RNA sequence: GGGAACGACUCGAGUAGAGUCGAAAAGAUAUGGAUAAUCUGGAGUCGCGAACUGGUCGGAAACGACCAGAAUUCGCGGCGUUGAAAGAUUAUCCUAAGUCAAAAGCCAGACGUUCGCGUCUGGCAACCAAGAAUAUUGGUUCGCCAAUAUUCUUGGAAAAGAAACAACAACAACAAC
Reactivity to 2A3 in 0.01 (KOAc 150mM, MgCl2 10mM, bicine 150mM(pH8.5), 24C), signal-to-noise 2, nucleotides 027 to 126: g020a010u060a040u120g010g000a010u000a000a010u010c000u020g000g030a050g010u000c000g000c000g010a010a020c010u000g030g000u010c000g020g010a130a100a050c010g000a000c000c010a010g020a000a220u030u000c000g000c000g000g000c000g000u160u020g000a000a000a000g000a000u000u000a000u000c000c000u000a050a030g060u020c030a120a010a140a070g000c020c010a020g020a020c000g040u090u170c300g040c020g150u010c000u010g000g010c000a010a000
Reactivity to DMS in 0.01 (KOAc 150mM, MgCl2 10mM, bicine 150mM(pH8.5), 24C), signal-to-noise 3, nucleotides 027 to 126: g000a040u010a300u010g020g010a000u000a010a010u000c000u000g020g000a060g030u000c000g020c000g010a010a100c000u000g010g010u000c000g010g000a090a110a230c000g010a020c020c010a000g000a050a080u000u000c010g020c000g000g000c010g000u000u020g000a110a150a020g000a020u000u000a010u010c000c000u000a010a080g010u020c040a070a050a150a160g010c000c000a010g010a020c010g020u000u000c300g030c010g000u000c010u000g000g010c000a010a020

The record gives the reactivity of an RNA of 177 nucleotides to 2A3 and DMS. 2A3 adducts were read by reverse transcription with SuperScript II with manganese. The 2A3 profile rests on 4,941 reads. It was measured as part of the RMDB library TTRDEL. Reactivities are rounded to 0.1 and cut off at 0 and 3.